[RMDB]
About this RNA: This 177-nucleotide RNA was probed chemically with 2A3 and DMS. Source: RMDB library TTRDEL, as collected in RNAgym. The RNA was probed in 150 mM KOAc, 10 mM MgCl2 and 150 mM bicine (pH 8.5) at 24 C. Reactivities are given for positions 27 through 126. For 2A3, 1,584 sequencing reads were counted.

RNA sequence: GGGAACGACUCGAGUAGAGUCGAAAAGAUAUGGACCUUGGUUGACCUGCAACAGCUCGGAAACGAGACAUGCAGGACCUGAGGUCCUAAGUCGUGAUCUGAAAUUGUGUUCGCACAAUUUCAGAAACACGACUCAGCCCUUCGGGGCUGAGUCGUGAAAAGAAACAACAACAACAAC
Reactivity to 2A3 in 0.01 (KOAc 150mM, MgCl2 10mM, bicine 150mM(pH8.5), 24C), signal-to-noise 1, nucleotides 027 to 126: g050a000u090a060u250g010g000a000c010c030u010u010g060g020u070u200g140a180c000c010u000g020c000a000a020c030a250g070c020u000c020g070g000a060a080a050c010g000a010g000a030c010a050u110g000c040a000g000g000a010c000c020u010g000a020g030g000u000c010c010u000a040a000g000u030c010g040u100g040a150u000c010u010g020a000a000a030u050u020g000u020g000u130u210c300g050c190a000c000a010a000u030u050u000c000a000g000a000a000a000
Reactivity to DMS in 0.01 (KOAc 150mM, MgCl2 10mM, bicine 150mM(pH8.5), 24C), signal-to-noise 2, nucleotides 027 to 126: g020a060u000a300u000g000g000a020c000c000u000u000g030g020u010u020g000a110c010c000u000g010c000a030a080c250a160g000c010u020c020g000g020a110a080a300c010g010a010g000a040c060a120u000g000c000a020g000g010a030c100c000u000g010a000g020g030u020c010c000u000a000a050g000u000c020g020u000g000a140u000c010u000g000a000a000a000u000u000g030u000g000u000u080c250g030c010a000c000a000a010u000u000u000c000a000g000a010a050a080